[RMDB]
Annotation
This 177-nucleotide RNA was probed chemically with DMS and 2A3. For 2A3, 19,914 sequencing reads were counted. The reactions ran in a buffer of 150 mM KOAc, 10 mM MgCl2 and 150 mM bicine (pH 8.5), at 24 C. For 2A3 the reverse transcriptase was SuperScript II with manganese.
RNA sequence: GGGAACGACUCGAGUAGAGUCGAAAACUGCACUACCAUAGAGCAUACUAUUGGGAGGUGCACUUCACAUGAGUAACUCCCCAAUGGAGGAUGUAGAUUCUGUCCAACGAUAUUAGGACUACAUCCAACUGUCUAUGUACUUCGGUACAUAGACAGUAAAAGAAACAACAACAACAAC
Reactivity to DMS in 0.01 (KOAc 150mM, MgCl2 10mM, bicine 150mM(pH8.5), 24C), signal-to-noise 6, nucleotides 027 to 126: c200u010g000c010a020c010u000a280c030c020a030u010a000g010a230g010c190a140u060a150c010u010a000u010u050g000g000g010a110g000g010u000g020c040a040c110u000u000c050a090c110a090u040g010a070g000u040a110a080c070u000c000c010c000c080a110a080u030g000g000a130g010g000a000u000g000u000a000g020a160u010u010c010u000g000u020c040c140a100a120c240g000a070u040a120u040u040a090g000g010a000c000u000a020c010a000u000c010c000a110
Reactivity to 2A3 in 0.01 (KOAc 150mM, MgCl2 10mM, bicine 150mM(pH8.5), 24C), signal-to-noise 9, nucleotides 027 to 126: c040u030g000c010a000c010u040a030c010c010a020u030a010g070a040g170c110a110u200a240c030u020a030u150u180g010g020g010a240g050g030u010g000c010a010c010u150u140c050a100c020a180u190g020a020g060u050a050a050c020u040c000c000c000c010a040a150u140g090g030a090g020g010a020u010g000u010a020g080a300u040u010c010u040g090u050c060c090a180a080c130g060a060u070a090u220u230a060g000g010a000c000u000a000c000a000u000c000c000a010